[RMDB]
RNA sequence: GGGAACGACUCGAGUAGAGUCGAAAAGCGACCAUCCAUAGGUGAUUGACGUGUCACGGUCUCACUUAUUCUGAGUCGCAUCUCAGGUUGUAUAAGAUUGUGAUACGUCAUAUACAAUCUGAGGAUAGUAAGUCUUAGUAUUCGUACUAGGACUUACAAAAGAAACAACAACAACAAC
Reactivity to 2A3 in 0.01 (KOAc 150mM, MgCl2 10mM, bicine 150mM(pH8.5), 24C), signal-to-noise 9, nucleotides 027 to 126: g040c020g050a050c010c010a020u040c020c010a030u060a060g000g020u020g020a080u060u120g010a020c010g050u080g080u140c060a030c100g070g010u000c000u010c010a040c020u050u050a030u170u060c030u020g020a020g040u060c060g060c120a170u070c000u000c000a010g020g010u030u020g040u050a050u020a110a050g010a020u040u100g040u050g100a050u070a110c030g000u000c000a000u000a000u000a010c010a010a030u010c000u010g010a020g020g010a010u050a040
Reactivity to DMS in 0.01 (KOAc 150mM, MgCl2 10mM, bicine 150mM(pH8.5), 24C), signal-to-noise 9, nucleotides 027 to 126: g010c060g000a100c010c030a080u010c030c030a100u010a030g010g010u000g010a070u010u010g000a010c010g020u010g000u010c070a040c070g000g000u000c010u000c100a040c090u010u010a020u020u030c070u010g000a060g010u000c230g010c190a080u030c010u000c000a000g010g010u010u000g020u010a040u020a130a030g000a010u000u000g010u010g010a060u020a050c050g000u000c000a020u010a020u010a070c070a060a010u010c000u000g010a080g000g010a040u010a090
Overview
An RNA of 177 nucleotides, treated with 2A3 and DMS and read out base by base. High 2A3 reactivity points to a flexible backbone, as in loops and unpaired stretches. For DMS the reverse transcriptase was MarathonRT.